[RMDB]
RNA sequence: GGGAACGACUCGAGUAGAGUCGAAAAAUCGCGAUGCUAGCGCCACUGCCACCAGAGCCGGUGAGCUUGAUGAGUGAGCAGGCAACACAAGACACAUUAUCAUUAAUGUGGGAUACCCCUUGGCAUCAACGUUCCAUUCUUUCGAGAAUGGAACGUUAAAAGAAACAACAACAACAAC
Reactivity to DMS in 0.01 (KOAc 150mM, MgCl2 10mM, bicine 150mM(pH8.5), 24C), signal-to-noise 3, nucleotides 027 to 126: a070u020c040g020c100g020a040u010g030c040u020a030g000c170g030c070c080a160c090u010g000c000c040a020c020c030a170g010a030g010c030c010g030g010u020g000a100g050c000u000u000g020a070u010g010a110g030u010g010a120g050c010a020g000g020c060a080a060c130a060c110a100a130g000a280c000a010c000a020u010u000a030u000c220a210u010u010a020a020u000g030u010g010g000g000a080u020a110c030c000c010c010u000u000g010g000c030a050u000c070
Reactivity to 2A3 in 0.01 (KOAc 150mM, MgCl2 10mM, bicine 150mM(pH8.5), 24C), signal-to-noise 3, nucleotides 027 to 126: a000u090c040g000c040g060a010u010g010c030u050a020g060c030g000c070c020a110c060u020g010c020c010a010c000c030a030g010a000g000c020c050g300g160u230g060a090g030c010u070u050g150a190u050g020a140g060u020g000a020g000c020a000g020g000c010a020a030c040a010c020a120a090g090a040c000a000c000a000u020u030a060u170c100a080u130u140a060a010u020g000u000g010g000g020a010u110a100c020c010c000c000u020u040g000g000c000a020u000c020

An RNA of 177 nucleotides, treated with DMS and 2A3 and read out base by base. Values cover nucleotides 27 to 126. For 2A3, 2,713 sequencing reads were counted. The reactions ran in a buffer of 150 mM KOAc, 10 mM MgCl2 and 150 mM bicine (pH 8.5), at 24 C.